The data come from the RNA Mapping Database (RMDB), library OK3TST. This 207-nucleotide RNA was probed chemically with DMS and 2A3. The 2A3 profile rests on 1,539 reads. Reactivities are given for positions 27 through 156. The RNA was probed in 150 mM KOAc, 10 mM MgCl2 and 150 mM bicine (pH 8.5) at 24 C. 2A3 adducts were read by reverse transcription with SuperScript II with manganese.
[RMDB]
RNA sequence: GGGAACGACUCGAGUAGAGUCGAAAAAAUAUUGCAGAACAGCAAAUAUUGCUGCCUGAUCCUUCCUCUGGAAGCUUCGUCUCAGAGGGGCACCUGGCUAUAUGAGGUGACACUCAGCCCCUACUGGGAGGUGUCUCCCAAUUAGGCUACACGGGUGAUGUCUUUCCAUAUUCGUAUGGAAAGACAUAAAAGAAACAACAACAACAAC
Reactivity to DMS in 0.01 (KOAc 150mM, MgCl2 10mM, bicine 150mM(pH8.5), 24C), signal-to-noise 2, nucleotides 027 to 156: a090a080u010a000u010u000g000c000a140g020a140a130c070a060g010c020a040a120a170u000a120u000u000g030c000u020g010c010c040u000g010a080u010c040c010u000u010c000c000u060c040u000g020g000a030a060g010c100u020u000c130g010u000c030u000c020a060g010a070g020g000g010g020c000a000c000c010u010g010g000c030u040a140u010a110u000g020a100g040g000u000g010a090c030a030c010u000c030a300g010c020c020c040c070u010a110c050u000g010g020g010a210g000g040u000g000u000c010u000c040c010c010a060a160u000u000a090g010g030c020u000a100c070a070c050g020g000g000u010g000
Reactivity to 2A3 in 0.01 (KOAc 150mM, MgCl2 10mM, bicine 150mM(pH8.5), 24C), signal-to-noise 3, nucleotides 027 to 156: a010a010u250a090u110u160g060c010a010g090a210a090c000a010g080c010a000a150a090u210a140u200u110g000c010u010g000c020c000u050g010a100u080c030c000u040u110c020c020u040c020u040g040g070a150a030g040c030u190u240c090g150u050c020u000c040a010g010a000g010g010g000g020c000a000c000c020u080g070g000c050u060a060u010a090u250g080a070g070g010u010g010a020c020a010c020u060c050a080g030c010c000c020c010u110a200c160u150g000g000g000a000g020g000u010g010u000c040u040c020c000c000a010a030u040u040a020g050g000c040u130a040c060a050c160g020g000g000u020g040